An RNA of 177 nucleotides, treated with DMS and 2A3 and read out base by base. For 2A3, 2,312 sequencing reads were counted.
RNA sequence: GGGAACGACUCGAGUAGAGUCGAAAAAUACAUAGGAUGAUAGGUUCUAGCAUAUGGAAGUGCAUAAACUUCAUCCAUUUCUUCUUGAGACAGAGGCGGUUGUGGAGGAUUUUGUACUACAUACCUACUGACGCUAUAAUUUCGAUUAUAGCGUCAGAAAAGAAACAACAACAACAAC
Reactivity to DMS in 0.01 (KOAc 150mM, MgCl2 10mM, bicine 150mM(pH8.5), 24C), signal-to-noise 4, nucleotides 027 to 126: a050u010a070c090a130u000a120g010g010a070u010g010a120u010a050g010g010u000u000c100u000a180g010c080a080u000a100u010g010g000a140a120g010u000g010c010a090u000a040a030a060c030u000u000c010a050u000c010c000a130u000u010u000c030u010u000c040u010u010g000a140g010a090c160a050g000a060g020g000c120g010g020u010u000g010u010g000g010a050g000g010a130u000u000u000u000g010u000a050c040u000a050c070a050u000a090c070c050u000a080
Reactivity to 2A3 in 0.01 (KOAc 150mM, MgCl2 10mM, bicine 150mM(pH8.5), 24C), signal-to-noise 2, nucleotides 027 to 126: a000u130a040c080a040u140a070g020g000a000u050g010a030u070a110g100g000u080u000c050u090a030g030c010a050u040a020u140g170g040a170a060g000u000g000c010a060u070a050a070a020c020u020u020c010a040u000c000c000a000u050u060u020c000u050u000c020u030u080g070a080g000a040c020a060g020a030g050g000c000g020g030u080u030g020u070g030g010a030g030g020a050u120u110u020u080g050u000a030c010u010a020c030a030u070a090c010c000u100a080
For DMS the reverse transcriptase was MarathonRT. For 2A3 the reverse transcriptase was SuperScript II with manganese. The reactions ran in a buffer of 150 mM KOAc, 10 mM MgCl2 and 150 mM bicine (pH 8.5), at 24 C.